[RMDB]
RNA sequence: GGGAACGACUCGAGUAGAGUCGAAAAGAAUGACGAUCUGAUUAAGGUCCGUCUCCUCCAUUAGUCCACAAGUUUCGGGGGUACAUCUACUUUGCUCAUUUCCAUAUCCCCAGAGUCUAGCACAAGGCCUGGUACAUAGUAGGUGCUCAAUAAAUAAGUAAAUUUACUAUUUCGAUAGUAAAUUUACAAAAGAAACAACAACAACAAC
Reactivity to 2A3 in 0.01 (KOAc 150mM, MgCl2 10mM, bicine 150mM(pH8.5), 24C), signal-to-noise 5, nucleotides 027 to 156: g030a020a070u200g000a010c020g000a010u030c020u050g120a300u270u180a070a020g020g000u050c140c050g020u020c030u030c020c010u030c010c010a090u100u140a030g060u070c020c010a080c050a210a080g030u020u060u080c050g010g000g010g000g000u020a030c000a030u020c000u010a040c020u020u060u050g050c040u060c110a170u100u130u050c090c030a080u070a120u210c060c040c000c010a000g030a010g020u000c010u050a060g110c110a070c040a180a020g000g000c000c000u010g000g010u050a040c030a020u040a010g010u010a010g040g010u020g000c010u030c050a080a160u250a300a050a040u300a150a070
Reactivity to DMS in 0.01 (KOAc 150mM, MgCl2 10mM, bicine 150mM(pH8.5), 24C), signal-to-noise 2, nucleotides 027 to 156: g020a070a080u010g010a070c030g010a020u010c020u000g000a230u010u000a110a090g000g020u000c040c050g030u000c020u000c060c000u030c040c020a220u010u020a150g000u010c020c040a060c040a080a300g000u000u000u000c050g020g010g050g090g060u000a020c030a020u000c030u000a020c030u000u040u010g020c030u010c030a140u000u000u020c110c040a180u010a160u010c020c000c010c010a090g000a230g030u000c020u000a140g030c120a090c110a080a110g010g010c000c020u010g010g020u030a020c020a050u000a000g010u010a040g020g010u000g010c030u000c030a080a100u000a000a030a100u000a030a280
The data come from the RNA Mapping Database (RMDB), library OK3TST.
This 207-nucleotide RNA was probed chemically with 2A3 and DMS.
The DMS profile rests on 3,249 reads.
Conditions: 150 mM KOAc, 10 mM MgCl2 and 150 mM bicine (pH 8.5), 24 C.